Source information:
This 207-nucleotide RNA was probed chemically with 2A3. Conditions: 150 mM KOAc, 10 mM MgCl2 and 150 mM bicine (pH 8.5), 24 C.
[RMDB]
RNA sequence: GGGAACGACUCGAGUAGAGUCGAAAACGUGGCUCCUCGUUUCUCCAUCCCUCCCAGCAGCCAGGAGGUGAUGCCAGGCGGCAGCGUGAACCUGACAUGCGUGGCAGUGGGUGCACCCAUGCCCUACGUGAAGUGGAUGAUGGGGGCCGAGGAGCUCAUCGCGUGGAUAAUUCGUUAUCCACGCGAUAAAAGAAACAACAACAACAAC
Reactivity to 2A3 in 0.01 (KOAc 150mM, MgCl2 10mM, bicine 150mM(pH8.5), 24C), signal-to-noise 1, nucleotides 027 to 156: c050g110u050g000g000c000u000c000c010u000c000g000u110u220u070c000u010c000c000a000u000c030c020c000u040c000c020c010a030g020c020a000g030c030c000a000g000g010a120g000g120u120g080a080u000g000c010c010a120g200g070c240g050g000c020a030g010c030g050u080g060a080a080c000c000u000g020a020c020a270u050g000c030g070u100g020g000c020a040g040u090g010g010g020u150g070c030a140c000c050c000a000u090g000c010c000c000u070a020c010g060u040g010a080a010g000u120g040g050a080u090g000a010u000g010g000g000g000g000c000c000g000a000g000g000a000g000c000u000c000